Conditions: 150 mM KOAc, 10 mM MgCl2 and 150 mM bicine (pH 8.5), 24 C. An RNA of 177 nucleotides, treated with DMS and 2A3 and read out base by base. DMS (dimethyl sulfate) methylates the pairing face of unpaired adenines and cytosines.
[RMDB]
RNA sequence: GGGAACGACUCGAGUAGAGUCGAAAACUUGUAGGAAAUUGAGGCCCUAAUCUGCCACCACUUACGAGCGUGCCAGGAUAAAAGCUGAAAACAUUGUUAUUAGACCAACAUCAAUAUAACAUGUCAGGUUCAUCAAUUAAUUCGUUAAUUGAUGAACAAAAGAAACAACAACAACAAC
Reactivity to DMS in 0.01 (KOAc 150mM, MgCl2 10mM, bicine 150mM(pH8.5), 24C), signal-to-noise 9, nucleotides 027 to 126: c040u000u010g010u000a070g010g010a050a090a140u000u000g000a210g000g000c020c060c050u010a100a070u000c090u000g010c070c030a060c060c090a080c050u000u010a070c130g000a050g010c090g020u000g000c060c030a060g010g020a080u010a050a060a080a080g020c040u000g000a120a070a090a140c030a020u010u010g010u000u000a020u000u010a300g000a040c050c050a060a090c200a180u000c030a050a050u010a030u000a010a030c020a020u000g010u000c110a080g010
Reactivity to 2A3 in 0.01 (KOAc 150mM, MgCl2 10mM, bicine 150mM(pH8.5), 24C), signal-to-noise 7, nucleotides 027 to 126: c020u030u080g060u110a080g010g130a080a180a200u090u120g050a070g010g030c010c000c000u030a050a080u020c030u050g020c010c010a020c010c020a050c030u070u110a040c060g030a030g040c030g000u040g000c010c000a030g060g000a020u120a080a140a020a010g030c030u050g060a050a040a030a040c020a040u070u120g010u010u010a020u020u040a020g020a030c040c040a040a050c050a050u060c020a070a020u100a010u010a120a010c010a010u020g030u050c050a020g110
For DMS the reverse transcriptase was MarathonRT.